Description: This 170-nucleotide RNA was probed chemically with DMS and 2A3.

[RMDB]
RNA sequence: GGGAACGACUCGAGUAGAGUCGAAAAUGGAACACGAGGGGACCAGUCCAGUCCGUGGGAACUACCCCGGAACUCCCGCUCUCCACACUCCUUCCCCCCGCGGGCCCCCCAAUUCAGAGCCAAGAACAAACACGUGCGUUCGCGCACGUGAAAAGAAACAACAACAACAAC
Reactivity to DMS in 0.01 (KOAc 150mM, MgCl2 10mM, bicine 150mM(pH8.5), 24C), signal-to-noise 2, nucleotides 027 to 129: u020g020g030a140a040c100a080c050g070a120g090g050g000g080a060c000c000a110g050u010c030c160a130g000u010c010c080g100u080g020g040g000a040a170c170u030a170c060c070c030c000g030g000a150a210c080u000c000c030c000g100c090u010c000u000c000c040a000c120a150c030u000c010c030u000u010c000c000c000c000c000c000g050c060g000g000g060c000c000c000c000c000c000a040a040u000u000c170a130g000a050g000c070c080a110a140g040a000a100c110a030a140a070
Reactivity to 2A3 in 0.01 (KOAc 150mM, MgCl2 10mM, bicine 150mM(pH8.5), 24C), signal-to-noise 2, nucleotides 027 to 129: u060g050g030a010a040c160a020c170g020a020g040g060g000g010a020c000c090a040g070u020c060c000a030g080u000c020c090g000u270g080g030g000a040a110c080u130a060c070c040c000c110g000g000a050a020c040u100c000c000c050g000c030u050c010u000c030c010a040c000a030c000u030c000c000u020u030c040c000c000c010c000c000g000c010g020g000g050c000c000c050c000c000c050a020a070u040u110c010a040g000a000g000c000c000a050a000g020a120a060c020a030a070a000
The RNA was probed in 150 mM KOAc, 10 mM MgCl2 and 150 mM bicine (pH 8.5) at 24 C. 2A3 adducts were read by reverse transcription with SuperScript II with manganese.